[RMDB]
RNA sequence: GGGAACGACUCGAGUAGAGUCGAAAAGCCACGCUAUUCGUAGCGUGGCGGUUAAGAUCUAGACUAAAACUGACAAAAAGUCUAGAUCAAAUAAAGUCAGAACGGUCCGGGAUUUCGAUCCCGGAAAGUACAUUUGGGUAUUCGUACCCAAAUGUACAAAAGAAACAACAACAACAAC
Reactivity to DMS in 0.01 (KOAc 150mM, MgCl2 10mM, bicine 150mM(pH8.5), 24C), signal-to-noise 3, nucleotides 027 to 126: g000c010c000a010c000g000c010u000a030u010u000c170g020u000a000g010c010g010u000g000g010c010g000g000u010u000a090a130g000a020u000c010u000a010g000a020c000u000a030a070a130a100c030u010g000a040c080a110a100a090a080a020g000u000c010u000a000g000a010u000c010a010a070a050u010a070a060a150g020u010c030a040g000a130a120c170g000g020u000c000c000g000g010g010a020u000u000u010c200g010a020u000c000c000c000g000g000a010a000a020
Reactivity to 2A3 in 0.01 (KOAc 150mM, MgCl2 10mM, bicine 150mM(pH8.5), 24C), signal-to-noise 2, nucleotides 027 to 126: g010c000c000a020c000g000c000u020a030u050u080c180g150u060a010g000c010g000u000g000g000c000g000g010u060u060a080a000g000a010u000c010u000a010g000a010c000u020a020a020a170a200c060u080g050a030c070a050a130a000a020a000g000u000c010u020a010g000a010u000c000a000a010a000u050a040a030a000g060u040c040a020g010a190a080c050g090g010u010c000c000g000g020g000a010u060u080u160c170g030a000u020c000c050c000g000g000a000a000a000
Structure probing data (DMS and 2A3) for a 177-nucleotide construct. The RNA was probed in 150 mM KOAc, 10 mM MgCl2 and 150 mM bicine (pH 8.5) at 24 C. Values are in units of 0.01, from 0 to 300, in steps of 10. It was measured as part of the RMDB library M2PK50. The DMS profile rests on 2,370 reads.